[RMDB]
RNA sequence: GGGAACGACUCGAGUAGAGUCGAAAAUGAGCGACGCUUUACUGACUUCAAGGAUGAAGGACGCGUCGCCGCCACCCUAGAGGCGGCAUCCCCCGCGUGACGCCCUCUGCAGGCACCGUCGUGACCGCCAGGUCAUUUGCUUCGGCAAAUGACCUGGAAAAGAAACAACAACAACAAC
Reactivity to DMS in 0.01 (KOAc 150mM, MgCl2 10mM, bicine 150mM(pH8.5), 24C), signal-to-noise 1, nucleotides 027 to 126: u000g000a300g000c000g000a000c010g010c010u000u010u000a260c200u010g000a300c180u000u000c010a060a280g000g000a040u000g000a190a030g000g000a210c280g000c000g000u000c040g060c000c020g000c090c030a030c020c000c010u000a040g000a060g020g020c010g020g040c040a100u000c000c020c010c030c110g030c180g000u000g010a090c040g000c060c010c030u000c060u060g060c160a020g000g000c010a070c070c000g040u010c020g000u000g000a120c030c070g000
Reactivity to 2A3 in 0.01 (KOAc 150mM, MgCl2 10mM, bicine 150mM(pH8.5), 24C), signal-to-noise 1, nucleotides 027 to 126: u130g000a010g010c000g000a000c020g050c000u110u140u250a150c070u110g060a020c000u040u010c040a140a260g300g050a110u200g020a030a010g020g000a000c030g000c010g000u010c000g000c000c000g080c010c010a080c000c000c000u150a240g030a070g080g030c010g010g000c050a080u050c050c000c000c000c090g040c030g030u040g050a050c000g050c080c000c020u050c010u040g020c060a040g000g000c010a020c070c000g030u000c020g000u030g050a040c000c030g000